[RMDB]
Chemical mapping of a 177-nucleotide RNA with 2A3. It was measured as part of the RMDB library OK1LIB. Conditions: 150 mM KOAc, 10 mM MgCl2 and 150 mM bicine (pH 8.5), 24 C. Reactivities are given for positions 27 through 126. For 2A3, 374 sequencing reads were counted.

RNA sequence: GGGAACGACUCGAGUAGAGUCGAAAAACAGGUCCUCUCUAUCAUGACCUACUCCGAUGGGAGAGAUCGGACAAGCUAUUCUAAUUUCAUAGGACCCAUUAAUGAUUUCGAACAUGUCAGAGAUAGCGUCAGUCGGUUCUUUCGAGAACCGACUGACAAAAGAAACAACAACAACAAC
Reactivity to 2A3 in 0.01 (KOAc 150mM, MgCl2 10mM, bicine 150mM(pH8.5), 24C), signal-to-noise 1, nucleotides 027 to 126: a010c020a070g020g000u000c000c000u120c000u000c040u050a110u060c020a080u120g050a060c010c000u000a060c080u030c000c010g060a060u160g000g060g000a050g000a000g000a040u050c000g050g010a000c040a010a010g070c000u030a040u120u000c000u000a160a120u080u060u030c160a120u060a050g010g180a050c000c000c000a020u030u100a260a190u130g130a100u000u060u090c040g080a090a140c090a060u060g060u200c000a000g000a080g010a160u000a030g070c070